[RMDB]
RNA sequence: GGGAACGACUCGAGUAGAGUCGAAAAAGAAAAAGAAAAAUAGUGUUUUGGAGCGCGCGGAGUAAACAUAUAUGGUUCAUAUAUGUCCGUAGGCACGUAAAAAAAGCGAGAAAAGAAAGAAAAGAAAGAUCGCUAUACGAUUCGUCGUAUAGCGAUCAAAAGAAACAACAACAACAAC
Reactivity to 2A3 in 0.01 (KOAc 150mM, MgCl2 10mM, bicine 150mM(pH8.5), 24C), signal-to-noise 1, nucleotides 027 to 126: a000g160a040a080a000a000a000g210a130a040a040a050a000u130a180g000u020g070u010u070u010u020g150g040a150g000c140g000c000g000c050g000g000a010g040u250a000a260a000c000a000u000a000u000a010u000g040g210u220u300c040a000u010a000u000a000u000g010u000c000c000g010u000a010g000g000c010a000c000g000u000a060a000a000a000a000a000a000g090c240g000a100g140a050a120a000a000g100a000a100a000g070a000a100a010a000g060a000a060a000
Reactivity to DMS in 0.01 (KOAc 150mM, MgCl2 10mM, bicine 150mM(pH8.5), 24C), signal-to-noise 1, nucleotides 027 to 126: a030g000a100a060a020a090a000g000a000a140a130a040a050u030a110g000u000g010u000u000u000u000g000g000a240g000c000g070c030g080c000g040g010a230g010u010a090a040a100c000a000u000a000u000a000u000g000g050u050u150c030a020u010a000u000a000u000g000u000c050c000g000u010a080g030g060c000a050c110g060u060a100a000a050a040a030a040a010g010c000g000a030g000a110a030a060a180g020a030a070a100g000a120a020a160a080g000a020a130a180